[RMDB]
An RNA of 177 nucleotides, treated with DMS and 2A3 and read out base by base. The DMS profile rests on 4,759 reads. DMS adducts were read by reverse transcription with MarathonRT. Conditions: 150 mM KOAc, 10 mM MgCl2 and 150 mM bicine (pH 8.5), 24 C. 2A3 adducts were read by reverse transcription with SuperScript II with manganese.

RNA sequence: GGGAACGACUCGAGUAGAGUCGAAAAGAUAUGGAUCCCAGUGUGCAAGGCUCCGGGUCGGAAACGACCCUGGGAGCUGAUGACCACACACCGGGAUCCUAAGUCAAAAGCGGUGUUCGCACCGCAAUCAGUAGCUUUAGUUCGCUAAAGCUACUGAAAAAGAAACAACAACAACAAC
Reactivity to DMS in 0.01 (KOAc 150mM, MgCl2 10mM, bicine 150mM(pH8.5), 24C), signal-to-noise 3, nucleotides 027 to 126: g000a010u000a030u000g010g000a010u000c010c000c000a030g020u000g020u010g000c070a100a150g010g010c000u000c000c020g000g010g010u000c010g010g000a010a010a030c000g010a010c000c000c010u000g030g010g000a020g010c000u000g010a060u010g000a260c300c060a130c030a000c010a030c040c040g020g010g010a000u000c010c000u000a000a050g000u010c030a120a050a110a090g010c010g010g010u000g010u010u020c250g010c010a010c000c000g020c010a040a010
Reactivity to 2A3 in 0.01 (KOAc 150mM, MgCl2 10mM, bicine 150mM(pH8.5), 24C), signal-to-noise 2, nucleotides 027 to 126: g020a010u030a000u070g000g000a010u000c000c020c040a010g010u000g010u000g030c230a300a300g070g000c020u000c010c000g010g020g000u020c030g000g000a010a000a010c010g000a020c040c010c020u000g020g060g010a000g000c000u000g000a020u110g060a040c150c030a020c010a010c010a000c050c040g000g010g010a000u000c000c000u000a010a000g000u000c020a010a060a080a170g010c000g000g000u040g050u090u200c300g000c150a000c000c020g000c000a000a030